The record gives the reactivity of an RNA of 207 nucleotides to 2A3. Conditions: 150 mM KOAc, 10 mM MgCl2 and 150 mM bicine (pH 8.5), 24 C.
[RMDB]
RNA sequence: GGGAACGACUCGAGUAGAGUCGAAAACUACUCUUGUUCGCAAGAGUAGAAAAAACCGUAGGCGUAUGUGUGCUAGAAAUACGGUUCGAAAGAGCCGUAAUUUCUUGGACCACAUUUACGCCUAAACGGAAAAAAGGGAUCGAUUCGUCGAUCCCAAGUAGUUAGCCAGUUUCGACUGGCUAACUACAAAAGAAACAACAACAACAAC
Reactivity to 2A3 in 0.01 (KOAc 150mM, MgCl2 10mM, bicine 150mM(pH8.5), 24C), signal-to-noise 2, nucleotides 027 to 156: c010u010a000c000u000c000u020u010g020u130u050c150g040c160a000a000g010a000g010u010a000g010a000a010a000a000a000a000c020c000g030u020a030g010g000c010g000u000a000u050g010u000g040u030g020c020u010a000g010a000a010a000u010a000c000g000g070u000u000c010g040a140a100a090g000a000g000c010c000g060u020a050a100u000u000u000c010u030u060g030g100a090c060c000a000c000a010u050u070u010a000c000g010c000c000u010a000a000a000c000g000g110a090a020a000a010a020a130g000g000g010a010u020c030g000a000u050u080c180g020u040c000g130a000u000c020c000c000a000a010
Values cover nucleotides 27 to 156.